[RMDB]
RNA sequence: GGGAACGACUCGAGUAGAGUCGAAAAUGCAUGCUGGCGCUGGCAGUACAACUACGUGUUCCCGAAGCGCGCCGUGAUCGCUCCCUUCUUCCAGCUGACCGUCGCCAGCAUGACGUUCUUCUGUCUGCCUUAAACUAACCUUCGGGUUAGUUUAAGGAAAAGAAACAACAACAACAAC
Reactivity to 2A3 in 0.01 (KOAc 150mM, MgCl2 10mM, bicine 150mM(pH8.5), 24C), signal-to-noise 2, nucleotides 027 to 126: u060g000c010a000u010g000c010u000g000g010c000g010c000u010g000g010c010a000g010u050a040c030a160a050c090u160a050c070g100u060g010u130u040c000c010c020g010a040a020g030c050g010c010g020c000c000g020u040g030a070u080c050g020c050u020c020c010c020u010u090c000u050u000c030c030a030g000c020u010g100a300c010c000g020u010c010g000c000c000a010g000c010a020u000g010a010c000g000u030u060c000u160u000c030u080g140u000c070u050g110
Reactivity to DMS in 0.01 (KOAc 150mM, MgCl2 10mM, bicine 150mM(pH8.5), 24C), signal-to-noise 3, nucleotides 027 to 126: u000g000c010a000u000g000c010u010g010g010c010g040c050u000g000g000c030a010g020u000a090c170a100a110c140u010a090c140g010u000g010u000u000c010c000c010g020a120a110g010c070g030c060g020c030c040g020u010g000a040u010c040g020c050u000c030c010c010u000u000c050u000u000c050c060a130g000c010u000g000a120c010c020g010u000c000g010c000c000a010g000c010a000u000g010a060c020g000u000u000c050u000u000c100u010g000u000c080u010g000